[RMDB]
RNA sequence: GGGAACGACUCGAGUAGAGUCGAAAAGGUUCAUACCUUUAUCUGCCAAAACGGGACCUCUGUUGAGGUAUAACCAAUAUUCCGUACUAAGGAUUUCGGUCCGGAACGUCUAGAGACUACACGGCAGCGCUUCGUCGAGUUUCGACUCGACGAAGCGAAAAGAAACAACAACAACAAC
Reactivity to 2A3 in 0.01 (KOAc 150mM, MgCl2 10mM, bicine 150mM(pH8.5), 24C), signal-to-noise 1, nucleotides 027 to 126: g030g010u070u290c040a010u210a200c000c000u000u000u030a010u050c000u040g020c000c000a000a000a000a000c000g000g000g010a000c000c010u000c010u050g200u190u270g100a000g000g000u000a000u000a000a000c000c000a000a000u060a030u230u170c000c000g000u000a000c010u000a000a000g030g000a000u000u080u100c230g040g000u000c010c000g010g000a000a000c030g000u000c000u000a010g000a040g010a170c000u010a050c050a000c010g060g030c000a000g050
This 177-nucleotide RNA was probed chemically with 2A3. 2A3 is a SHAPE reagent: it acylates the 2'-hydroxyl of flexible nucleotides of all four kinds. The 2A3 profile rests on 462 reads.